[RMDB]
RNA sequence: GGGAACGACUCGAGUAGAGUCGAAAAGCAGAGUCCUCGUCCCGGAGGGCCGGCGGUUAUGGCCGGGCUGCCCGGAGGGGCUGUCCGCCAUAUUAGCCGGGGGGAACGGCCCAGGCCCGGAAGGGAGCAGGCUAACCCCGGACGACCGGCGCUUCCGCAUACUCCAUCAGUUCGCUGAUGGAGUAUGAAAAGAAACAACAACAACAAC
Reactivity to 2A3 in 0.01 (KOAc 150mM, MgCl2 10mM, bicine 150mM(pH8.5), 24C), signal-to-noise 2, nucleotides 027 to 156: g020c030a030g050a020g250u050c020c030u060c010g090u090c030c040c000g020g010a020g020g000g010c010c000g000g000c000g010g020u000u000a000u000g030g070c270c060g040g010g000c010u010g000c010c000c020g100g040a180g020g000g010g000c010u030g000u000c000c000g000c000c000a000u010a000u010u050a010g010c020c010g000g000g000g010g000g030a190a040c090g010g000c000c000c010a010g040g010c000c010c000g000g060a040a100g030g010g020a000g000c020a000g010g000c000u030a080a090c000c000c010c000g000g000a010c010g080a230c000c000g090g010c110g070c100u060u020c010c000g000